About this RNA
Chemical mapping of a 177-nucleotide RNA with DMS and 2A3.

RNA sequence: GGGAACGACUCGAGUAGAGUCGAAAAGUGACAGUCUCUCUCAGUGUCUGUCAGACUCUGUCACUGUCUGAGAGUGACUGACAGACUCUGACACUCUCUCUGUGUCAGUGUGUGACACUCACUGUCAUGCCUGUAAAUUCUUCGGAAUUUACAGGCAAAAAGAAACAACAACAACAAC
Reactivity to DMS in 0.01 (KOAc 150mM, MgCl2 10mM, bicine 150mM(pH8.5), 24C), signal-to-noise 3, nucleotides 027 to 126: g030u010g000a050c030a040g000u000c100u000c060u010c040u010c030a030g020u000g010u010c040u010g020u000c030a030g000a060c050u000c030u010g010u010c020a050c110u010g000u020c120u000g010a040g000a020g020u000g000a100c010u000g000a080c020a040g010a040c010u010c000u010g000a040c070a020c040u010c210u000c080u010c090u000g000u000g000u000c000a020g020u000g000u000g000u010g010a070c060a020c060u010c090a050c010u000g010u000c030a120
Reactivity to 2A3 in 0.01 (KOAc 150mM, MgCl2 10mM, bicine 150mM(pH8.5), 24C), signal-to-noise 3, nucleotides 027 to 126: g060u040g000a020c020a020g040u010c010u000c010u010c010u000c090a030g030u000g080u100c030u030g010u030c030a010g010a060c040u060c040u090g140u100c010a050c120u170g130u120c120u110g030a030g000a000g040u020g050a070c010u020g010a000c020a010g020a000c000u020c010u010g000a010c010a010c010u070c000u000c010u010c070u080g010u010g000u010c010a030g010u030g040u050g000u010g130a020c040a030c090u020c000a030c000u030g040u110c010a050